[RMDB]
RNA sequence: GGGAACGACUCGAGUAGAGUCGAAAACGCCUUGGUGGAGCGCUCUCCAGGCGCUCCCCCAGGCCCACACCAGCCUGUGAGCCCCGCCUGGGGGCCAAGACCCUGCAGGUUUGACAGCACCAGGUCACCUAGUAGGUGUCUUCGGACACCUACUAGGAAAAGAAACAACAACAACAAC
Reactivity to 2A3 in 0.01 (KOAc 150mM, MgCl2 10mM, bicine 150mM(pH8.5), 24C), signal-to-noise 2, nucleotides 027 to 126: c060g050c000c000u010u080g020g020u090g010g000a000g000c020g000c000u040c020u050c100c000a040g020g020c000g000c000u000c000c000c000c000c000a010g000g030c020c010c000a090c000a050c010c000a010g050c000c000u070g010u040g080a010g030c000c000c050c030g080c040c080u100g010g020g020g000g000c000c020a030a020g050a160c010c000c020u070g070c070a000g020g000u040u130u110g070a010c010a010g000c020a020c030c000a000g020g020u030c020a020
Reactivity to DMS in 0.01 (KOAc 150mM, MgCl2 10mM, bicine 150mM(pH8.5), 24C), signal-to-noise 1, nucleotides 027 to 126: c290g010c040c000u010u020g050g020u000g010g000a010g030c000g000c030u030c080u110c170c270a180g000g020c000g000c000u000c000c000c090c070c020a080g020g000c010c150c100a050c090a100c020c020a150g000c040c020u050g000u010g000a050g020c060c010c010c110g000c010c000u030g000g000g050g020g000c000c100a020a040g000a140c010c000c050u030g010c040a110g000g000u000u000u020g020a070c190a010g030c030a140c000c040a090g000g000u000c100a100
An RNA of 177 nucleotides, treated with 2A3 and DMS and read out base by base.
2A3 adducts were read by reverse transcription with SuperScript II with manganese.
It was measured as part of the RMDB library OK1LIB.